Source: RMDB libraries RFM100 and RFMREP, as collected in RNAgym. An RNA of 177 nucleotides, treated with 2A3 and DMS and read out base by base. The reactions ran in a buffer of 150 mM KOAc, 10 mM MgCl2 and 150 mM bicine (pH 8.5), at 24 C. Values cover nucleotides 27 to 126.
RNA sequence: GGGAACGACUCGAGUAGAGUCGAAAAAGCACUGUGUGAACGGUGUAAUCAUACGUAAGUCCGACGUGCCGGAUUGCAGUUUUUCUGCAGAUUCCUGAACAAUCAGGGGAUGGCACUGCCCAGAGAUACCCUCUAAUACAUUCGUGUAUUAGAGGGUAAAAGAAACAACAACAACAAC
Reactivity to 2A3 in 0.01 (KOAc 150mM, MgCl2 10mM, bicine 150mM(pH8.5), 24C), signal-to-noise 9, nucleotides 027 to 126: a000g020c010a010c020u020g000u010g030u040g140a100a020c020g020g000u030g010u050a050a070u060c050a050u060a160c050g100u100a080a110g080u060c060c040g030a060c050g030u010g020c010c010g030g040a080u070u030g000c000a000g030u040u040u080u170u180c000u000g000c000a010g010a140u080u080c010c000u020g020a090a050c080a140a210u110c010a020g010g010g020g020a040u080g040g000c010a000c010u020g020c010c010c010a060g010a000g000a070u050
Reactivity to DMS in 0.01 (KOAc 150mM, MgCl2 10mM, bicine 150mM(pH8.5), 24C), signal-to-noise 9, nucleotides 027 to 126: a120g010c020a010c010u000g020u010g020u040g000a130a030c010g010g020u000g010u000a050a100u010c120a100u010a080c090g010u010a100a100g000u010c070c040g000a090c120g010u000g010c010c020g000g010a180u010u000g000c000a010g010u010u010u020u030u010c000u000g000c000a020g010a140u010u010c000c000u010g010a050a120c280a130a100u000c020a020g000g000g000g010a250u020g000g000c010a020c020u000g010c010c010c020a110g010a120g010a150u010